[RMDB]
RNA sequence: GGGAACGACUCGAGUAGAGUCGAAAAGACGGAAAAGAUCGAACCUAAGAAGAUCAGGUAGUGUGAGCCGAAUCCUAGGGCUCCUAGGGACGCAUCGUCCGAUGCGAAAUAAACACUAACGUCGAAAAUUAGCCCGUAUGUUCGCAUACGGGCUAAUAAAAGAAACAACAACAACAAC
Reactivity to 2A3 in 0.01 (KOAc 150mM, MgCl2 10mM, bicine 150mM(pH8.5), 24C), signal-to-noise 2, nucleotides 027 to 126: g000a000c000g020g040a000a100a050a130g000a030u000c000g030a030a140c020c050u110a080a050g050a060a000g000a100u040c040a030g020g180u010a000g000u060g000u070g020a060g050c020c020g080a110a040u040c040c010u020a090g030g000g010c010u030c040c000u060a080g000g000g000a000c000g000c000a020u030c050g300u160c110c190g000a000u000g000c000g000a020a020a020u130a000a080a020c000a040c020u020a070a050c010g000u030c040g040a040a000a000
Reactivity to DMS in 0.01 (KOAc 150mM, MgCl2 10mM, bicine 150mM(pH8.5), 24C), signal-to-noise 3, nucleotides 027 to 126: g000a060c020g000g000a170a160a120a070g020a000u000c020g020a120a220c130c070u000a070a160g000a150a070g000a070u050c010a050g000g000u000a010g010u020g010u000g000a030g000c070c010g000a090a010u010c010c030u000a090g020g010g010c100u020c000c220u070a020g010g010g010a290c060g010c030a020u010c000g010u080c250c160g010a010u000g010c030g010a040a060a100u030a130a140a000c040a000c040u000a030a140c030g010u000c000g000a020a060a080